[RMDB]
RNA sequence: GGGAACGACUCGAGUAGAGUCGAAAAGAUAUGGAGGAGCGAGCGAGGAUCACUGGGUCGGAAACGACCCUGGUGGGAGCUCCCCUCCUAAGUCGUACAUCCCAAAAAGUUCGCUUUUUGGGAUGAAGUUAGGAGCUAAGUUCGCUUAGCUCCUAACAAAAGAAACAACAACAACAAC
Reactivity to DMS in 0.01 (KOAc 150mM, MgCl2 10mM, bicine 150mM(pH8.5), 24C), signal-to-noise 3, nucleotides 027 to 126: g000a030u000a300u010g000g000a020g000g000a090g050c180g010a010g030c000g010a120g020g010a090u010c010a020c010u000g000g010g020u000c010g000g010a100a060a170c010g000a010c010c010c000u000g010g010u010g000g000g010a130g000c020u000c000c020c000c010u000c010c000u000a000a070g010u000c030g010u010a280c000a010u000c000c000c010a000a000a010a010a030g010u000u030c200g020c010u000u000u000u000u000g000g010g010a000u000g010a030a070
Reactivity to 2A3 in 0.01 (KOAc 150mM, MgCl2 10mM, bicine 150mM(pH8.5), 24C), signal-to-noise 2, nucleotides 027 to 126: g020a010u070a020u110g020g000a020g010g040a230g100c300g040a000g000c020g060a260g100g100a090u050c020a020c040u020g000g000g020u000c010g010g030a050a070a030c010g030a020c050c020c010u010g020g010u010g000g020g000a000g000c000u000c010c020c000c000u020c000c000u000a060a020g010u010c010g010u040a010c010a000u000c000c000c000a020a010a000a000a000g060u090u110c180g070c140u020u010u000u000u010g000g010g010a000u010g000a050a010
Chemical mapping of a 177-nucleotide RNA with DMS and 2A3.